[RMDB]
RNA sequence: GGGAACGACUCGAGUAGAGUCGAAAAGAUAUGGAGAGAGCUUUGAUCACAUCGUCUUCGGAAACGAAGACGAGUGUGGGAGCUCCUCCUAAGUCAAAAGCGGAUAUACGUUCGCGUAUAUCCGCAAGAAGUUACCUAGGUUCGCCUAGGUAACUUCAAAAGAAACAACAACAACAAC
Reactivity to DMS in 0.01 (KOAc 150mM, MgCl2 10mM, bicine 150mM(pH8.5), 24C), signal-to-noise 2, nucleotides 027 to 126: g000a020u000a300u010g000g000a000g000a150g010a010g030c000u000u010u000g020a150u020c040a020c000a050u000c000g010u000c000u000u010c010g020g000a070a090a140c000g000a000a000g010a000c010g010a010g020u000g030u030g000g000g000a010g000c000u010c000c000u000c000c000u000a000a040g010u000c030a120a070a130a140g010c000g000g000a030u010a010u000a020c000g000u000u020c250g020c000g000u000a000u000a000u000c000c000g010c020a000a020
Reactivity to 2A3 in 0.01 (KOAc 150mM, MgCl2 10mM, bicine 150mM(pH8.5), 24C), signal-to-noise 2, nucleotides 027 to 126: g020a000u040a020u110g010g010a040g000a000g000a000g000c000u090u130u120g190a140u300c050a020c010a210u020c000g000u010c000u000u000c010g000g030a040a070a030c010g010a010a000g000a010c010g000a000g000u130g000u070g010g020g020a000g000c010u010c000c000u000c000c000u020a100a030g040u010c050a020a000a130a120g000c010g000g000a000u000a000u000a020c010g030u020u100c210g000c000g130u010a000u000a000u000c000c000g000c000a000a010

Structure probing data (DMS and 2A3) for a 177-nucleotide construct. Conditions: 150 mM KOAc, 10 mM MgCl2 and 150 mM bicine (pH 8.5), 24 C. For DMS the reverse transcriptase was MarathonRT.